[RMDB]
RNA sequence: GGGAACGACUCGAGUAGAGUCGAAAAGAAAGAAGUGAUCCCAUCUAAAGGGUGUCUGAUGGCAGGGGGGAGAUGCCAUCCUCACUACAGUGGUAUAUUCUUCAAUGGGAUCAUACUGAGUCCAGGGGAACCCAGGAGAAUUCGUUCUCCUGGGUUCAAAAGAAACAACAACAACAAC
Reactivity to DMS in 0.01 (KOAc 150mM, MgCl2 10mM, bicine 150mM(pH8.5), 24C), signal-to-noise 2, nucleotides 027 to 126: g010a130a060a060g000a270a090g060u000g010a000u000c000c000c000a010u000c170u010a100a050a060g020g000g020u000g010u000c030u000g000a030u000g000g030c160a020g000g020g000g000g000g010a010g000a130u000g030c210c110a080u000c020c060u000c020a020c030u010a050c030a060g000u000g020g010u010a040u000a020u000u000c020u000u000c140a050a010u000g000g000g000a000u000c000a020u010a020c030u010g000a100g020u000c000c000a080g000g000g000
This 177-nucleotide RNA was probed chemically with DMS. For DMS, 1,713 sequencing reads were counted. The reactions ran in a buffer of 150 mM KOAc, 10 mM MgCl2 and 150 mM bicine (pH 8.5), at 24 C. In probing experiments dimethyl sulfate is read out at A N1 and C N3, which are open when not base-paired.